RNA sequence: GGGAACGACUCGAGUAGAGUCGAAAAGCUGCCGAAAGGCAGGAAAAGUUGGGCGGAUGAGUUACCGCGUACGAAGAAUUUUUUAUUCGAAGAAAGUACGUGUGAUAGCUUACACACGAACAACGAAGGGUAUAUUAAUCUUCGGAUUAAUAUACCCAAAAGAAACAACAACAACAAC
Reactivity to 2A3 in 0.01 (KOAc 150mM, MgCl2 10mM, bicine 150mM(pH8.5), 24C), signal-to-noise 5, nucleotides 027 to 126: g010c000u000g000c000c000g040a090a050a030g020g000c060a000g000g020a020a110a030a060g000u010u010g010g020g000c010g020g010a060u020g010a040g010u000u000a020c000c000g000c000g000u000a000c020g040a020a170g020a020a010u020u040u020u050u180u260a070u050u090c030g030a050a020g100a110a150a010g010u000a000c010g010u020g040u080g030a240u000a000g000c000u020u040a020c080a000c010a010c090g010a020a000c000a010a000c010g020a060a110
Reactivity to DMS in 0.01 (KOAc 150mM, MgCl2 10mM, bicine 150mM(pH8.5), 24C), signal-to-noise 4, nucleotides 027 to 126: g010c000u000g020c000c000g010a080a110a160g000g000c000a010g000g010a080a110a080a150g000u000u010g000g010g010c020g000g020a170u000g020a050g010u000u000a010c020c000g000c010g000u020a020c000g000a170a260g000a000a000u000u010u030u070u070u020a030u020u000c000g010a150a180g030a100a100a220g000u000a000c000g010u010g000u070g000a080u000a010g000c020u010u000a050c300a090c150a300c000g020a020a000c000a000a020c020g000a110a100